[RMDB]
The data come from the RNA Mapping Database (RMDB), libraries RFM100 and RFMREP.
The record gives the reactivity of an RNA of 177 nucleotides to DMS and 2A3.
For 2A3 the reverse transcriptase was SuperScript II with manganese.
DMS adducts were read by reverse transcription with MarathonRT.

RNA sequence: GGGAACGACUCGAGUAGAGUCGAAAAACGCCGGUACGCCGGCGAAGUUGCGGCAUGCGGGAUCUUUAGUUGUGGUGUGUGAAUUCUUAGUUGCAGCAACUAAAGAUCCCUCAGGCUGCAAUGAAAAGAUUGAUAUCGAAUUCGUUCGAUAUCAAUCAAAAGAAACAACAACAACAAC
Reactivity to DMS in 0.01 (KOAc 150mM, MgCl2 10mM, bicine 150mM(pH8.5), 24C), signal-to-noise 4, nucleotides 027 to 126: a130c030g020c000c000g020g010u000a080c200g020c010c000g000g010c010g000a010a060g010u000u020g000c010g010g010c000a030u000g010c180g020g000g010a000u000c000u010u000u000a000g020u000u000g000u010g000g020u020g010u010g000u020g000a070a120u030u030c190u040u030a110g000u010u010g000c010a180g000c000a000a020c000u000a000a000a020g000a020u000c000c000c000u000c010a000g000g010c000u000g000c000a010a000u010g010a080a080a100a110
Reactivity to 2A3 in 0.01 (KOAc 150mM, MgCl2 10mM, bicine 150mM(pH8.5), 24C), signal-to-noise 9, nucleotides 027 to 126: a000c010g000c010c010g000g010u090a090c290g040c050c000g000g000c010g010a020a020g010u000u010g000c000g000g000c010a010u010g000c020g000g000g000a000u000c000u000u010u010a020g010u010u020g030u040g220g180u060g050u020g030u040g180a130a160u200u100c100u180u210a180g040u110u150g010c000a000g000c000a000a000c000u000a000a000a000g000a000u000c000c000c000u000c000a000g000g000c000u000g000c000a000a000u040g010a020a050a010a020
In probing experiments dimethyl sulfate is read out at A N1 and C N3, which are open when not base-paired. The RNA was probed in 150 mM KOAc, 10 mM MgCl2 and 150 mM bicine (pH 8.5) at 24 C.